[RMDB]
RNA sequence: GGGAACGACUCGAGUAGAGUCGAAAAGUGGCACAGUUCGCUGUGCCACAAAGGACUACCCGUCAGGGUAAAGGCCAUACGGACAGCCGGGUCCACUGCCGAAAAUCCGUAGCUUCGGCUACGGAAACAUUAUGUCACCCUUCGGGGUGACAUAAUGAAAAGAAACAACAACAACAAC
Reactivity to 2A3 in 0.01 (KOAc 150mM, MgCl2 10mM, bicine 150mM(pH8.5), 24C), signal-to-noise 1, nucleotides 027 to 126: g000u000g010g020c010a000c000a010g010u070u070c170g040c100u000g010u020g010c020c000a000c010a000a010a000g010g000a020c000u020a030c000c000c000g080u150c140a110g000g000g040u070a170a100a050g060g000c030c000a040u060a050c000g020g030a020c010a010g030c030c000g050g000g000u000c000c010a020c020u050g000c000c000g020a110a030a020a040u000c020c000g010u000a000g000c000u010u040c240g130g000c020u000a000c000g000g000a010a000a000
Reactivity to DMS in 0.01 (KOAc 150mM, MgCl2 10mM, bicine 150mM(pH8.5), 24C), signal-to-noise 2, nucleotides 027 to 126: g000u000g010g000c000a000c000a010g010u000u010c190g040c000u000g000u000g000c000c000a000c000a020a050a090g000g010a020c040u000a030c010c000c010g010u020c260a090g010g000g020u010a020a080a080g000g040c000c020a100u000a090c040g000g000a030c030a150g000c000c010g020g020g000u000c000c000a190c090u010g000c040c010g020a300a070a060a110u000c000c000g010u000a000g000c010u010u010c200g020g010c000u000a000c010g010g010a010a050a080
Structure probing data (2A3 and DMS) for a 177-nucleotide construct. For 2A3, 2,562 sequencing reads were counted. For DMS the reverse transcriptase was MarathonRT. For 2A3 the reverse transcriptase was SuperScript II with manganese. Values are in units of 0.01, from 0 to 300, in steps of 10. The reactions ran in a buffer of 150 mM KOAc, 10 mM MgCl2 and 150 mM bicine (pH 8.5), at 24 C.